[RMDB]
RNA sequence: GGGAACGACUCGAGUAGAGUCGAAAAAUUACGUACGCGCGUACGAUGCGCGCAUGCAUCGGCCGUACGGCAUUAAUGCUACGGCUACGGCCGUAUAAUCGAUCGCGAUUAAUCGGCGCUAAUAUCGACUUGGUCCCAAGUUCGCUUGGGACCAAGUAAAAGAAACAACAACAACAAC
Reactivity to 2A3 in 0.01 (KOAc 150mM, MgCl2 10mM, bicine 150mM(pH8.5), 24C), signal-to-noise 1, nucleotides 027 to 126: a000u090u030a000c010g000u030a030c060g100c000g000c030g020u000a050c050g050a000u080g000c010g000c000g020c010a010u120g000c000a010u090c050g000g030c000c000g020u010a000c040g010g010c000a040u180u220a230a100u200g000c000u020a050c040g020g000c000u000a050c150g050g000c010c000g040u050a040u040a050a020u040c020g050a020u170c110g020c030g090a020u030u030a060a010u060c020g050g000c040g050c070u060a090a020u120a110u150c030g070
Reactivity to DMS in 0.01 (KOAc 150mM, MgCl2 10mM, bicine 150mM(pH8.5), 24C), signal-to-noise 1, nucleotides 027 to 126: a040u030u000a090c030g010u000a020c000g010c230g060c030g020u000a070c030g000a020u000g000c000g000c170g050c120a010u040g000c020a080u000c050g000g020c000c000g000u000a020c110g020g000c070a060u000u010a130a010u000g020c040u010a050c040g000g000c020u000a090c170g020g010c010c000g020u000a020u010a050a030u000c030g010a150u000c190g010c020g030a030u000u000a070a210u000c070g010g030c050g010c080u000a090a020u000a040u020c030g010
This 177-nucleotide RNA was probed chemically with 2A3 and DMS. The reactions ran in a buffer of 150 mM KOAc, 10 mM MgCl2 and 150 mM bicine (pH 8.5), at 24 C. For 2A3 the reverse transcriptase was SuperScript II with manganese. Reactivities are rounded to 0.1 and cut off at 0 and 3.